[RMDB]
RNA sequence: GGGAACGACUCGAGUAGAGUCGAAAAUCAAAGAACUUAGGCUUAUUCUACUAUAUGCUUCAAUCUGGAAUCUUUGAGUUAAGUUUAAGUCACUUCUUGAAUAGACCUGAUCUACUGGAAACUUCACUCAGGUGGCUCAUUAAAUGGGAACAGAUGAUACGCCUAUACUGUUCGCAGUAUAGGCGUAAAAAGAAACAACAACAACAAC
Reactivity to 2A3 in 0.01 (KOAc 150mM, MgCl2 10mM, bicine 150mM(pH8.5), 24C), signal-to-noise 2, nucleotides 027 to 156: u140c090a080a070a050g020a120a020c070u100u070a060g030g020c000u040u030a060u120u170c030u110a120c000u040a050u060a050u270g030c020u060u060c060a100a240u070c110u160g090g030a050a040u040c010u090u060u130g020a020g000u010u040a010a000g000u010u000u050a040a020g000u010c010a030c080u050u000c020u060u060g080a110a110u110a100g050a030c000c040u000g020a070u030c000u080a090c050u060g010g060a040a070a060c000u110u070c050a020c030u070c010a010g000g040u010g050g000c010u000c020a030u030u270a160a140a110u080g010g010g030a010a090c000a010g020a070u070g020a010
Reactivity to DMS in 0.01 (KOAc 150mM, MgCl2 10mM, bicine 150mM(pH8.5), 24C), signal-to-noise 1, nucleotides 027 to 156: u000c050a100a070a110g000a090a070c000u000u020a000g020g000c030u000u010a020u000u000c020u000a110c110u020a150u010a100u000g020c040u000u010c040a080a100u010c050u000g060g030a100a060u000c040u010u000u080g010a050g040u000u010a000a060g000u000u000u000a000a020g000u000c030a070c020u040u000c000u000u000g000a050a080u000a100g030a160c040c080u000g010a090u000c040u000a120c040u000g010g010a050a060a050c060u000u000c040a040c010u000c040a040g000g020u010g010g020c010u020c030a040u010u000a010a130a140u010g020g020g030a080a180c040a100g000a070u010g010a240